Structure probing data (2A3 and DMS) for a 207-nucleotide construct. 2A3 adducts were read by reverse transcription with SuperScript II with manganese. For DMS the reverse transcriptase was MarathonRT. For 2A3, 509 sequencing reads were counted. Values cover nucleotides 27 to 156. The RNA was probed in 150 mM KOAc, 10 mM MgCl2 and 150 mM bicine (pH 8.5) at 24 C.
[RMDB]
RNA sequence: GGGAACGACUCGAGUAGAGUCGAAAAUUAUCUCGUAAACGCUGUCUGCAAAACAAUAAGUGCCAAACAAACGCGCACUGACUUCGCUCUCGCUGCCUAAGCAGUAAGACAGUCCGUCAGCCCGGGAUUGCUAUCGUCCCGGUUCCUGGCGUCAUUAGGAAGAAGAUGUGUUCGCACAUCUUCUUCCAAAAGAAACAACAACAACAAC
Reactivity to 2A3 in 0.01 (KOAc 150mM, MgCl2 10mM, bicine 150mM(pH8.5), 24C), signal-to-noise 1, nucleotides 027 to 156: u060u000a130u050c020u010c080g170u110a140a000a000c010g010c010u040g010u020c020u020g000c070a130a160a030a060c020a040a270u160a260a000g070u020g000c050c000a110a110a050c090a060a110a080c220g020c000g000c060a000c000u010g080a080c000u110u040c040g070c040u070c020u000c020g000c020u020g000c000c050u080a120a060g010c000a000g000u000a030a030g000a010c000a000g000u000c010c010g000u000c000a020g010c060c060c000g000g000g000a030u080u080g100c140u130a040u240c100g020u010c000c000c000g000g000u030u010c020c000u000g000g020c000g000u010c020a010u040u200a030
Reactivity to DMS in 0.01 (KOAc 150mM, MgCl2 10mM, bicine 150mM(pH8.5), 24C), signal-to-noise 1, nucleotides 027 to 156: u000u030a120u060c040u000c030g050u000a080a120a100c120g110c010u000g010u010c010u000g070c050a050a060a100a140c010a080a120u000a050a060g040u030g000c000c020a120a180a150c120a090a190a100c050g040c100g020c070a030c010u010g040a080c020u020u000c040g060c070u000c000u020c060g040c000u000g000c000c090u000a090a170g000c000a030g070u000a060a090g010a020c000a070g000u000c030c060g110u000c000a090g030c160c030c000g020g000g010a060u000u040g070c160u000a100u010c080g040u000c020c000c000g020g010u000u000c070c060u000g000g000c000g030u000c090a040u000u060a190